Source information: The record gives the reactivity of an RNA of 177 nucleotides to DMS and 2A3. For 2A3, 3,648 sequencing reads were counted. Values cover nucleotides 27 to 126. Conditions: 150 mM KOAc, 10 mM MgCl2 and 150 mM bicine (pH 8.5), 24 C. It was measured as part of the RMDB library TTRDEL. For DMS the reverse transcriptase was MarathonRT.
RNA sequence: GGGAACGACUCGAGUAGAGUCGAAAAGAUAUGGACAUCGAUCGUCCGAACUACCUCGAGGGUCGGAAACGACCCGAGAGGCGGACGGGAGUCCUAAGUCAAACAUUGUUCCUUCGGGAACAAUGAACUAAGUGUUGAACUUCGGUUCAACACUUAGAAAAGAAACAACAACAACAAC
Reactivity to DMS in 0.01 (KOAc 150mM, MgCl2 10mM, bicine 150mM(pH8.5), 24C), signal-to-noise 2, nucleotides 027 to 126: g010a020u000a300u010g000g000a000c000a230u010c100g010a130u040c000g010u000c000c000g020a070a050c090u000a260c030c000u000c000g010a300g010g000g000u000c000g000g010a030a080a180c000g000a030c000c000c000g010a120g010a010g000g000c030g010g000a010c010g010g000g000a050g000u000c000c010u020a040a080g000u000c050a140a090a210c010a000u010u000g000u010u000c000c000u000u030c160g000g000g010a010a000c000a000a000u000g000a060a180
Reactivity to 2A3 in 0.01 (KOAc 150mM, MgCl2 10mM, bicine 150mM(pH8.5), 24C), signal-to-noise 1, nucleotides 027 to 126: g020a000u070a020u120g010g010a010c030a300u150c100g180a160u100c000g000u000c000c020g020a060a060c140u160a080c070c010u000c010g000a040g020g000g000u000c000g040g000a030a080a040c010g010a010c000c020c020g000a010g000a000g000g030c000g000g000a000c000g020g020g000a010g020u000c000c010u010a150a010g060u020c030a030a030a110c000a020u000u010g000u010u010c020c000u020u070c300g100g010g010a000a000c000a000a000u010g000a030a010